[RMDB]
RNA sequence: GGGAACGACUCGAGUAGAGUCGAAAAGAAACCUUACAAAUGCAGUGAAUGUGACAAAUGCUUUACUAGAAAAGGCACUCUGAGAAUUCAUCAGAGAAUUCAUACAGGAGAGAAACCUUACAAAUGCAGUGAAUGUGACAAAUGCUUUACCCAAAAACGUAUAUGGAUCAUUCGUGAUCCAUAUACGAAAAGAAACAACAACAACAAC
Reactivity to DMS in 0.01 (KOAc 150mM, MgCl2 10mM, bicine 150mM(pH8.5), 24C), signal-to-noise 2, nucleotides 027 to 156: g010a110a120a080c030c020u000u000a230c070a130a090a120u000g020c030a080g010u010g000a100a100u010g030u000g010a150c080a030a050a060u000g030c030u000u000u000a200c070u010a130g010a090a090a060a060g000g030c050a090c020u000c020u000g000a300g010a120a150u020u000c040a090u000c040a100g010a200g030a060a020u000u000c020a180u000a110c070a080g010g010a090g010a100g000a100a050a050c020c050u000u010a240c090a020a080a080u000g030c050a020g030u000g000a090a050u010g010u000g020a100c020a020a020a080u000g000c040u000u010u000a130c020c020c020a030a020a060a130a140
Reactivity to 2A3 in 0.01 (KOAc 150mM, MgCl2 10mM, bicine 150mM(pH8.5), 24C), signal-to-noise 5, nucleotides 027 to 156: g030a040a070a010c010c020u080u100a060c050a070a130a050u120g000c010a010g030u030g110a120a090u080g040u050g070a040c040a030a110a020u060g010c000u070u080u060a110c070u100a070g100a070a100a000a010g020g000c030a010c030u000c000u020g050a060g060a130a150u160u080c020a060u050c030a090g050a000g000a130a020u030u010c000a010u050a140c050a010g030g040a020g020a000g010a090a080a020c000c000u020u030a030c040a040a110a040u080g000c010a010g010u010g080a090a060u070g020u020g040a020c030a030a080a010u050g010c000u060u070u130a090c000c010c000a010a060a040a000a010